Structure probing data (2A3) for a 177-nucleotide construct.
For 2A3 the reverse transcriptase was SuperScript II with manganese.
The data come from the RNA Mapping Database (RMDB), library OK1LIB.
RNA sequence: GGGAACGACUCGAGUAGAGUCGAAAAAUGCUGCUAGGAAAUGGGCCAGGGCUCACGCGAAUGAUUAUAAGGUUCUUGUUGGUUUGGGUAUAGUAAAACCUGACUAUCAUUUGCAAGCUAAACAAGGCGACGUGUCGUGUUUCGACACGACACGUCGAAAAGAAACAACAACAACAAC
Reactivity to 2A3 in 0.01 (KOAc 150mM, MgCl2 10mM, bicine 150mM(pH8.5), 24C), signal-to-noise 1, nucleotides 027 to 126: a000u100g000c100u010g020c010u010a000g000g090a040a190a190u130g020g010g000c000c000a000g040g050g080c000u000c070a040c050g030c000g000a000a020u010g030a100u000u130a220u120a150a060g010g010u000u020c050u000u050g010u020u030g120g050u000u000u250g050g000g080u260a080u110a050g150u100a000a160a000a000c000c000u000g000a000c000u020a000u000c000a000u000u000u000g000c000a070a000g010c000u200a120a000a010c060a020a060g080g000